[RMDB]
RNA sequence: GGGAACGACUCGAGUAGAGUCGAAAAAAUCUAGACAUAGUGUAGAUGCACGCUGCGGCUGAGACCAUCUUGUACCGUCUGACCAUCGACAAUUUGCAUUUGUAGGCGGACCUAUCCUUUACACAAGAACUCAAAUACGCUUCGGCGUAUUUGAGUUAAAAGAAACAACAACAACAAC
Reactivity to DMS in 0.01 (KOAc 150mM, MgCl2 10mM, bicine 150mM(pH8.5), 24C), signal-to-noise 2, nucleotides 027 to 126: a080a010u000c020u000a010g000a070c050a060u020a080g000u000g000u030a040g020a090u030g020c090a080c140g000c060u000g000c030g010g000c000u000g000a190g000a110c060c020a050u020c040u030u000g050u010a050c040c020g030u010c000u000g000a090c110c060a030u010c050g010a000c130a170a090u010u000u020g000c120a040u020u020u000g000u000a040g000g020c030g000g020a060c010c050u010a020u000c060c010u010u030u050a040c100a100c160a080a110g010
Reactivity to 2A3 in 0.01 (KOAc 150mM, MgCl2 10mM, bicine 150mM(pH8.5), 24C), signal-to-noise 3, nucleotides 027 to 126: a000a000u110c040u040a050g070a020c040a080u100a040g030u030g020u130a030g000a050u090g020c030a000c040g000c010u040g010c090g030g010c000u050g030a000g010a030c000c050a010u060c040u000u080g010u010a040c020c030g060u010c000u000g030a090c010c020a080u110c030g030a060c000a060a120u030u080u200g070c030a050u070u030u100g090u160a010g000g070c020g010g000a020c000c000u070a090u110c010c010u070u140u160a020c070a000c000a020a060g020